[RMDB]
Structure probing data (DMS) for a 177-nucleotide construct. The DMS profile rests on 816 reads.

RNA sequence: GGGAACGACUCGAGUAGAGUCGAAAAGCAAUUUCAUCCUUCUGGUCUGACAGACUAGAGAAGAUUUUGAUCUUUGAAACCAAAUAACCCAACCCCCAUUUGUGGCUAAGGAGCGUCCUGUGGUUGGAGUACGAUGGGUGUUCGCACCCAUCGUACUAAAAGAAACAACAACAACAAC
Reactivity to DMS in 0.01 (KOAc 150mM, MgCl2 10mM, bicine 150mM(pH8.5), 24C), signal-to-noise 1, nucleotides 027 to 126: g010c060a030a010u000u000u000c000a150u000c090c060u000u020c000u000g010g000u000c000u030g020a160c180a110g020a010c000u000a000g000a020g010a130a110g010a030u000u010u000u010g020a120u000c010u010u010u000g010a180a140a210c010c080a040a100a120u000a110a100c030c020c020a050a270c040c010c000c010c050a190u010u000u010g020u000g030g010c110u010a120a080g000g000a060g000c060g000u010c020c030u000g000u000g030g010u010u010g010g010